[RMDB]
This 177-nucleotide RNA was probed chemically with 2A3 and DMS. For 2A3 the reverse transcriptase was SuperScript II with manganese. For DMS, 3,314 sequencing reads were counted. High 2A3 reactivity points to a flexible backbone, as in loops and unpaired stretches.
RNA sequence: GGGAACGACUCGAGUAGAGUCGAAAAGAUAUGGAAAUCGCCAGGGAGACGUGGCUCGGAAACGAGCCAUACGUCAUCGAUCUGGGAUUUCCUAAGUCAAAGAGACCUUAGUUCGCUAAGGUCUCAACAGAUACAUGACCUUCGGGUCAUGUAUCUGAAAAGAAACAACAACAACAAC
Reactivity to 2A3 in 0.01 (KOAc 150mM, MgCl2 10mM, bicine 150mM(pH8.5), 24C), signal-to-noise 2, nucleotides 027 to 126: g000a000u000a010u080g000g030a000a020a010u040c070g110c180c010a020g010g030g020a070g010a010c010g010u010g000g000c000u010c000g020g020a010a000a000c020g000a010g030c020c010a010u070a010c010g000u020c000a030u300c030g000a020u010c010u000g010g010g000a000u000u010u000c010c000u000a010a000g000u000c030a040a120a110g000a000g000a000c000c000u000u000a000g020u030u140c300g030c200u000a000a000g000g000u000c010u000c000a000a000
Reactivity to DMS in 0.01 (KOAc 150mM, MgCl2 10mM, bicine 150mM(pH8.5), 24C), signal-to-noise 2, nucleotides 027 to 126: g000a020u010a020u000g000g000a010a010a010u000c000g020c010c000a010g010g010g000a030g030a010c010g010u000g010g000c000u000c000g030g000a010a000a040c010g010a020g020c000c010a010u000a040c110g020u010c010a300u000c290g010a010u010c000u010g010g000g010a010u000u000u000c000c000u000a010a060g010u010c000a070a100a120g010a010g000a050c000c000u000u000a000g000u000u020c250g030c010u010a000a000g010g020u000c000u010c000a020a130